[RMDB]
RNA sequence: GGGAACGACUCGAGUAGAGUCGAAAACAGUCGACAUCGCGGUCAACGUCACGACACGUACUAACGUUGUAUACACAGCGUCGACCAAUACGUGCAUCGACGCCGCGGUGCGUGCAUGCACACACUGGUUAUAUAAUGCCAGCGUUGUAUAUGGUCGGAUUCGUAAAACGUUCGCGUUUUACGAAUCAAAAGAAACAACAACAACAAC
Reactivity to DMS in 0.01 (KOAc 150mM, MgCl2 10mM, bicine 150mM(pH8.5), 24C), signal-to-noise 2, nucleotides 027 to 156: c020a130g020u000c010g030a070c020a040u000c030g020c030g010g010u010c000a060a050c030g000u000c010a300c070g020a040c030a040c020g010u000a030c080u000a080a030c010g000u020u010g010u000a160u000a230c200a060c000a010g000c030g030u000c020g010a150c110c110a060a110u000a030c070g020u010g000c010a260u000c070g000a040c020g010c010c020g010c020g010g030u000g000c000g010u010g020c000a060u000g020c050a040c070a070c030a010c000u010g030g010u000u000a160u000a170u020a170a150u020g020c010c000a000g000c040g000u000u000g040u000a070u000a020u010g030g000u000c010g010
Reactivity to 2A3 in 0.01 (KOAc 150mM, MgCl2 10mM, bicine 150mM(pH8.5), 24C), signal-to-noise 6, nucleotides 027 to 156: c040a020g140u090c020g050a130c010a020u000c020g020c010g020g020u120c140a130a100c070g040u030c040a010c110g170a090c030a000c020g040u050a050c050u110a090a010c010g000u020u010g030u050a240u070a210c130a010c010a060g010c010g020u050c040g080a060c020c000a040a010u010a020c010g010u000g010c010a060u090c110g040a010c010g020c000c000g030c020g010g010u030g000c000g020u030g040c020a050u090g030c040a030c010a000c000a000c110u000g030g010u110u030a130u010a050u060a300a200u270g000c000c000a010g010c040g030u050u030g020u000a060u020a070u150g080g010u080c050g070
Record summary
Structure probing data (DMS and 2A3) for a 207-nucleotide construct. The RNA was probed in 150 mM KOAc, 10 mM MgCl2 and 150 mM bicine (pH 8.5) at 24 C. It was measured as part of the RMDB library OK3TST. 2A3 adducts were read by reverse transcription with SuperScript II with manganese.